[RMDB]
RNA sequence: GGGAACGACUCGAGUAGAGUCGAAAAAUUAAAGAGUAUUUUGUCCCACUCUUUAAGGGUUUAACAAUGGCAGAUGAUCUCCAGGAGGUCAUGAAGAAAAUGCUGGAAAAUGUCAGUGGACAAGGAAAUUUAGCAUUUUAUUCGUAAAAUGCUAAAUAAAAGAAACAACAACAACAAC
Reactivity to 2A3 in 0.01 (KOAc 150mM, MgCl2 10mM, bicine 150mM(pH8.5), 24C), signal-to-noise 4, nucleotides 027 to 126: a000u020u010a000a010a000g010a010g020u030a080u090u260u030u020g020u010c000c000c000a010c000u000c010u010u020u020a010a020g080g060g040u090u170u130a100a040c080a090a100u190g030g000c020a010g010a140u020g000a010u020c020u000c040c060a090g230g060a010g020g000u020c010a020u020g050a020a080g060a030a170a010a010u040g000c020u040g080g090a060a120a050a060u140g110u070c020a010g020u060g170g000a010c010a020a000g050g060a110a200
Reactivity to DMS in 0.01 (KOAc 150mM, MgCl2 10mM, bicine 150mM(pH8.5), 24C), signal-to-noise 6, nucleotides 027 to 126: a100u000u000a010a000a010g010a020g010u000a050u010u010u010u010g000u010c010c010c050a060c000u000c000u000u000u000a010a020g010g010g020u010u010u000a090a130c140a090a090u010g010g000c020a040g010a060u000g000a020u000c010u000c010c200a200g010g010a030g020g000u000c020a010u010g010a100a100g000a090a070a080a070u000g010c010u000g010g000a080a060a080a090u010g010u000c140a060g030u010g020g020a020c020a020a030g010g000a070a090